Chemical mapping of a 177-nucleotide RNA with DMS and 2A3. Values cover nucleotides 27 to 126. The 2A3 profile rests on 510 reads. Reactivities are rounded to 0.1 and cut off at 0 and 3.
[RMDB]
RNA sequence: GGGAACGACUCGAGUAGAGUCGAAAAGUGUAAUUUGUUUUACAAUGAUGAAGAUAAUUAGUCUAUCAAAAGAAAGGGGUUGGGACUGUUAUGAGUGAUAAUUUGUCAUUAUUCAUUGACUAUAUCACAGCACUUCAAUGUUCGCAUUGAAGUGCUGAAAAGAAACAACAACAACAAC
Reactivity to DMS in 0.01 (KOAc 150mM, MgCl2 10mM, bicine 150mM(pH8.5), 24C), signal-to-noise 2, nucleotides 027 to 126: g000u000g000u000a040a080u000u000u040g010u020u010u000u000a030c030a000a000u000g000a110u000g010a080a040g000a010u000a080a100u020u080a170g000u050c020u000a130u020c060a030a060a050a110g000a050a090a080g030g000g000g040u000u000g000g000g000a090c100u010g000u000u020a080u030g000a050g010u040g000a010u010a030a000u010u020u030g030u020c010a010u010u050a070u040u020c180a040u020u000g000a030c000u000a040u030a030u000c020a110
Reactivity to 2A3 in 0.01 (KOAc 150mM, MgCl2 10mM, bicine 150mM(pH8.5), 24C), signal-to-noise 2, nucleotides 027 to 126: g020u020g080u020a020a300u010u220u010g170u000u090u070u000a060c060a170a000u060g000a050u070g030a130a010g010a180u120a070a190u210u060a060g000u020c000u060a110u020c100a080a050a000a230g210a060a020a070g010g000g000g020u080u100g050g000g020a070c000u020g030u070u150a050u300g050a020g040u000g020a020u000a080a180u030u240u240g010u010c000a020u000u080a130u300u110c130a030u030u020g000a000c090u060a020u000a000u100c000a000